[RMDB]
RNA sequence: GGGAACGACUCGAGUAGAGUCGAAAAGAUAUGGAAUUGUACUUCGAAGAACUACUCUCGGAAACGAGAGGUAGGGAGAAGGACAAUUCCUAAGUCAAACGUAUAUACCGUUCGCGGUAUAUACGAAUCUUUAAGGCAAGUUCGCUUGCCUUAAAGAAAAAGAAACAACAACAACAAC
Reactivity to DMS in 0.01 (KOAc 150mM, MgCl2 10mM, bicine 150mM(pH8.5), 24C), signal-to-noise 4, nucleotides 027 to 126: g000a010u000a080u000g010g010a010a010u000u000g010u000a000c000u000u000c000g000a130a150g000a190a290c000u000a020c000u000c000u000c000g010g000a020a020a050c000g010a010g000a020g000g010u000a010g000g010g000a040g000a000a010g010g000a010c000a000a000u000u000c000c000u000a000a070g000u000c010a080a120a240c010g010u000a000u000a010u000a000c000c000g010u000u010c220g030c000g010g010u000a000u000a000u000a000c000g000a040a040
Reactivity to 2A3 in 0.01 (KOAc 150mM, MgCl2 10mM, bicine 150mM(pH8.5), 24C), signal-to-noise 3, nucleotides 027 to 126: g010a010u020a010u070g000g000a010a000u000u000g010u000a030c010u020u010c010g300a300a100g000a060a010c000u020a010c000u000c000u010c000g000g000a020a010a010c010g000a000g000a010g030g010u020a010g000g000g020a110g000a000a000g010g010a000c000a010a000u000u000c000c000u000a010a000g000u000c030a100a040a080c020g000u010a000u010a000u000a000c010c010g000u030u070c300g010c010g140g000u000a000u000a000u000a000c000g000a000a040